[RMDB]
RNA sequence: GGGAACGACUCGAGUAGAGUCGAAAAAGUAUGGGAAAGGAUGUGUUGCCUGUCAUGAAUGAGGUCGCCAAAUUACCGGGUGGGCAUAAGCCACUUAACUUUAUUCAUAAAUUAGCGGAUGGAAAUAAUCCAGUAACCUAUUCGUAGGUUACUGGAUAAAAGAAACAACAACAACAAC
Reactivity to 2A3 in 0.01 (KOAc 150mM, MgCl2 10mM, bicine 150mM(pH8.5), 24C), signal-to-noise 2, nucleotides 027 to 126: a000g030u050a070u110g020g010g030a030a100a020g050g000a040u030g050u020g010u090u060g060c000c020u020g040u070c010a040u070g090a100a060u060g020a000g050g000u020c000g030c040c000a030a070a050u080u030a070c020c010g020g000g000u040g040g000g000c020a060u090a230a000g070c020c000a030c020u040u070a020a010c000u000u090u100a100u100u050c030a030u040a280a170a080u080u080a050g060c030g090g010a030u040g020g030a060a040a110u150a050
Reactivity to DMS in 0.01 (KOAc 150mM, MgCl2 10mM, bicine 150mM(pH8.5), 24C), signal-to-noise 5, nucleotides 027 to 126: a090g020u010a050u010g010g010g020a070a080a070g000g010a070u000g010u010g010u010u000g010c030c030u000g020u000c080a070u010g010a070a080u000g000a080g000g010u000c060g030c040c050a050a050a080u010u010a100c100c070g000g000g030u000g020g010g020c050a080u010a080a150g010c020c010a050c080u010u000a070a060c070u000u000u000a050u010u000c050a030u000a060a060a070u000u000a050g030c070g010g010a050u010g010g010a060a070a070u000a080

Conditions: 150 mM KOAc, 10 mM MgCl2 and 150 mM bicine (pH 8.5), 24 C. Chemical mapping of a 177-nucleotide RNA with 2A3 and DMS.